[RMDB]
RNA sequence: GGGAACGACUCGAGUAGAGUCGAAAAAGCGGUCUGACGCCCUGUCACGGUUUCCCUGCGGAGCUGUGCCCGGGGCCCCGACGGAUUCCGGUCCGUCGCAGGGGUGGCCCUCCACCUCGAUACCCGUCUGAUAUCGAAUAUUCGUAUUCGAUAUCAGAAAAGAAACAACAACAACAAC
Reactivity to DMS in 0.01 (KOAc 150mM, MgCl2 10mM, bicine 150mM(pH8.5), 24C), signal-to-noise 4, nucleotides 027 to 126: a080g010c080g010g010u000c060u000g000a140c140g020c020c010c020u010g000u000c000a030c030g010g020u000u020u000c000c010c140u010g000c180g000g000a050g010c010u000g010u000g000c120c110c030g000g000g010g000c010c050c070c020g000a030c000g000g000a020u010u000c190c110g000g000u000c010c020g000u000c000g020c150a120g010g010g000g020u000g000g000c120c100c230u030c020c000a020c020c010u020c000g010a130u010a070c040c000c000g010u020
Reactivity to 2A3 in 0.01 (KOAc 150mM, MgCl2 10mM, bicine 150mM(pH8.5), 24C), signal-to-noise 9, nucleotides 027 to 126: a000g070c060g010g020u060c080u090g050a050c070g040c000c000c000u020g010u020c010a010c020g020g010u070u170u110c030c020c070u170g060c280g020g010a010g000c010u010g010u020g020c040c090c020g000g000g010g010c000c000c000c000g000a010c000g010g010a010u100u030c060c140g120g020u000c000c000g000u010c000g000c040a050g000g000g000g000u020g010g010c020c020c010u060c010c000a010c000c000u010c010g010a030u070a150c000c010c000g030u010